Chemical mapping of a 177-nucleotide RNA with 2A3 and DMS. For DMS the reverse transcriptase was MarathonRT. Source: RMDB library OK2TST, as collected in RNAgym. The RNA was probed in 150 mM KOAc, 10 mM MgCl2 and 150 mM bicine (pH 8.5) at 24 C. The 2A3 profile rests on 985 reads. For 2A3 the reverse transcriptase was SuperScript II with manganese. The DMS profile rests on 1,112 reads.
[RMDB]
RNA sequence: GGGAACGACUCGAGUAGAGUCGAAAAACAGUCAGAAAGACGCCUUCUGAAGCUAGACUAAACGAGCCAAGGCUUGUUUGGGGAAAGUCAUCCAUCUCAAUCAUCUAUGAUGAAGUUGCCACAGAGGCUGAGUCUGUAGUUUCGACUACAGACUCAGAAAAGAAACAACAACAACAAC
Reactivity to 2A3 in 0.01 (KOAc 150mM, MgCl2 10mM, bicine 150mM(pH8.5), 24C), signal-to-noise 1, nucleotides 027 to 126: a000c020a000g070u070c000a010g110a080a040a010g090a080c030g060c020c000u090u020c000u020g040a050a000g000c000u020a000g040a080c000u030a040a020a000c000g020a010g000c030c000a240a080g090g000c000u000u040g000u010u030u010g040g000g000g000a070a100a000g040u040c040a030u000c030c000a060u040c030u000c030a070a210u040c020a020u000c090u260a190u140g030a010u000g010a050a000g090u130u070g080c000c010a030c000a060g070a000g080g040
Reactivity to DMS in 0.01 (KOAc 150mM, MgCl2 10mM, bicine 150mM(pH8.5), 24C), signal-to-noise 2, nucleotides 027 to 126: a140c140a100g010u020c050a070g000a120a070a110g020a110c120g010c050c030u000u010c000u000g000a140a050g020c050u000a080g030a120c010u010a000a010a030c000g010a010g000c000c040a110a100g070g010c030u020u000g000u010u010u000g010g020g000g020a130a060a080g010u000c100a070u010c050c070a040u010c090u010c060a040a110u000c040a070u010c040u000a040u010g020a020u000g010a080a060g010u000u000g010c010c040a100c120a050g000a040g020g010